Structure probing data (2A3) for a 207-nucleotide construct. It was measured as part of the RMDB library OK3TST. Values cover nucleotides 27 to 156.
[RMDB]
RNA sequence: GGGAACGACUCGAGUAGAGUCGAAAAUGCCCGAGGGGCGGCAAGAGGGCCAUGUCCGACCUGGAGCUGAGACAGGUACUUCCCACUGUGGGCCAUCUCAGGGCUGCCAUAGCGGGCAGUGCUGACACCCUGGGUCAGGGGCUAGGAAAGAGGGAAACCCUGCUAGUACUUUCGAGUACUAGCAGGGAAAAGAAACAACAACAACAAC
Reactivity to 2A3 in 0.01 (KOAc 150mM, MgCl2 10mM, bicine 150mM(pH8.5), 24C), signal-to-noise 1, nucleotides 027 to 156: u020g060c020c000c010g010a080g010g030g010g040c070g010g010c100a040a040g020a020g080g000g000c050c070a050u110g010u030c050c030g030a030c020c020u020g020g030a060g020c030u010g020a040g030a070c070a020g070g000u060a050c010u020u010c010c000c000a000c020u040g030u030g040g050g000c000c000a170u060c130u070c090a110g000g210g000c040u100g140c020c000a020u040a000g050c040g000g000g000c000a000g000u010g010c020u010g000a000c020a070c020c000c030u070g000g010g000u020c000a010g010g010g010g030c000u050a040g000g030a080a000a060g000a040g000g000g000a300a010a000